RNA sequence: GGGAACGACUCGAGUAGAGUCGAAAAACGAACUCGUUUCGAUGCGCGGAGUCCGGCGGCACGCGGCGAAUCGUCUGCUGUGUUUCGAACACGGCGGUCGACCGGGCAUAUGCAGCCACUGUGUUCUUGUCUCUCCGAGUAGCAACAGGGUAAACGCCUCUACAAGGAGCUUCGGCUCCUUGUAGAGAAAAGAAACAACAACAACAAC
Reactivity to 2A3 in 0.01 (KOAc 150mM, MgCl2 10mM, bicine 150mM(pH8.5), 24C), signal-to-noise 2, nucleotides 027 to 156: a010c050g010a040a010c030u070c110g020u030u060u080c060g050a060u130g000c050g010c000g040g030a040g010u060c070c060g040g040c010g050g040c080a040c090g090c010g020g040c070g150a090a040u090c010g060u000c030u040g040c010u020g000u000g020u050u090u270c140g040a050a010c000a000c000g010g020c000g000g020u000c000g020a060c020c010g040g040g000c040a050u070a030u180g070c020a020g010c010c000a110c040u040g020u010g000u130u050c010u080u070g070u030c030u000c000u000c120c030g020a040g030u070a020g040c030a010a060c020a100g020g010g020u120a150a060a070c080g020c010
Chemical mapping of a 207-nucleotide RNA with 2A3. The reactions ran in a buffer of 150 mM KOAc, 10 mM MgCl2 and 150 mM bicine (pH 8.5), at 24 C.